[RMDB]
RNA sequence: GGGAACGACUCGAGUAGAGUCGAAAAUGGUACGUACAUCGGAUCUCGUCAUGGAUCCGUCUAGUCUAGUCAUGGGAUCACUAGGUGAUCCUAUCGUACGGAUCUGAGCGUGACACGUACUGACAUGGUCUCGGUAAGGGUUCGCCCUUACCGAGACAAAAGAAACAACAACAACAAC
Reactivity to 2A3 in 0.01 (KOAc 150mM, MgCl2 10mM, bicine 150mM(pH8.5), 24C), signal-to-noise 2, nucleotides 027 to 126: u160g020g040u040a010c020g020u020a030c060a220u150c140g170g060a210u000c060u040c030g070u070c080a140u300g000g020a000u000c000c010g000u000c000u020a050g060u000c040u070a050g030u060c050a050u060g020g010g030a010u030c010a010c030u110a070g300g000u000g010a000u000c000c000u010a010u000c010g050u090a000c000g010g000a010u000c030u050g020a040g100c040g020u050g020a020c010a010c050g000u000a020c000u030g040a020c030a120u160g090
Reactivity to DMS in 0.01 (KOAc 150mM, MgCl2 10mM, bicine 150mM(pH8.5), 24C), signal-to-noise 3, nucleotides 027 to 126: u000g020g000u000a010c040g010u000a020c180a180u010c120g000g000a100u010c020u010c070g000u010c170a120u030g010g010a010u000c010c020g000u000c090u000a090g010u000c130u000a090g000u010c150a070u000g010g000g000a020u000c030a010c000u010a150g020g020u000g010a000u000c000c000u010a010u000c130g000u000a050c020g010g010a010u000c020u000g000a110g010c090g000u000g000a060c120a080c020g030u000a030c000u000g000a090c220a110u020g000